[RMDB]
RNA sequence: GGGAACGACUCGAGUAGAGUCGAAAAUGCUAAGGGUUUGAUAUCUGCUAAAACCCGGUGCAUUCAUCAAUGCAGGUUAAGCCAAAGGGAUGUCCCGACCGCAGGCCGACAAUCCAGGGAACCGGAUAAAAGAUUGGUGGGUUCGCCCACCAAUCAAUCCCUGAAAUAAGUUCGCUUAUUUCAGGGAAAAAGAAACAACAACAACAAC
Reactivity to 2A3 in 0.01 (KOAc 150mM, MgCl2 10mM, bicine 150mM(pH8.5), 24C), signal-to-noise 1, nucleotides 027 to 156: u050g000c000u040a080a050g020g000g060u000u000u000g020a010u010a020u120c020u000g040c020u060a030a050a000a000c010c000c020g000g000u000g000c030a040u140u260c030a110u110c060a000a270u160g000c030a020g050g020u020u080a050a010g010c010c030a040a020a110g020g000g000a020u050g070u120c010c000c000g000a000c010c010g000c040a000g000g000c030c010g010a000c030a100a040u110c230c060a020g000g000g040a030a060c050c080g080g010a010u100a190a130a000a010g000a010u020u020g010g000u010g000g000g000u020u040c060g090c010c010c000a000c000c000a000a000u010c000a000a000
Reactivity to DMS in 0.01 (KOAc 150mM, MgCl2 10mM, bicine 150mM(pH8.5), 24C), signal-to-noise 2, nucleotides 027 to 156: u000g010c010u000a300a100g000g000g010u000u010u010g040a110u000a050u000c080u000g010c090u000a140a020a020a040c010c010c020g000g010u010g000c020a010u040u010c020a070u000c080a150a200u010g000c040a070g020g010u010u000a060a130g020c040c030a040a110a200g020g010g020a170u000g000u010c020c010c010g000a070c000c020g030c110a220g010g000c040c000g000a100c070a090a050u000c040c000a090g020g040g010a110a040c040c010g030g000a120u000a030a100a110a120g000a030u000u010g010g010u000g010g000g000u000u000c230g020c030c000c000a020c010c000a000a000u010c000a040a100
Structure probing data (2A3 and DMS) for a 207-nucleotide construct. The 2A3 profile rests on 577 reads. For DMS the reverse transcriptase was MarathonRT. For DMS, 3,164 sequencing reads were counted. Reactivities are given for positions 27 through 156.